An RNA of 207 nucleotides, treated with 2A3 and read out base by base. It was measured as part of the RMDB library RSTRND.
[RMDB]
RNA sequence: GGGAACGACUCGAGUAGAGUCGAAAAGCUCGUAAAACUGACUAAAACAAACUAACUGCAAACGACGAACGUUUCGCACUCGCUGCUUAAUAACCAGUGAGCCCUACAACAGCAGGCCGAUGGGCUGGGCAAGGGGUCUUUAGCGCAAGUUGAAGGCGAUUCUACCCUAGUUCGCUAGGGUAGAAUCAAAAGAAACAACAACAACAAC
Reactivity to 2A3 in 0.01 (KOAc 150mM, MgCl2 10mM, bicine 150mM(pH8.5), 24C), signal-to-noise 1, nucleotides 027 to 156: g050c020u050c160g050u100a000a000a180a000c060u030g120a100c020u060a080a020a080a050c130a060a050a040c010u100a090a040c020u050g020c020a030a030a030c000g140a020c070g080a220a080c090g010u000u010u020c050g000c030a000c010u040c000g000c010u020g000c000u080u010a010a000u020a030a080c050c000a000g000u000g070a000g000c000c000c000u140a080c050a110a010c010a030g070c000a020g000g000c000c000g110a090u110g040g000g000c030u030g000g000g030c060a100a040g010g010g020g020u020c110u090u040u010a060g000c040g000c050a090a020g020u000u010g070a040a010g040g060c050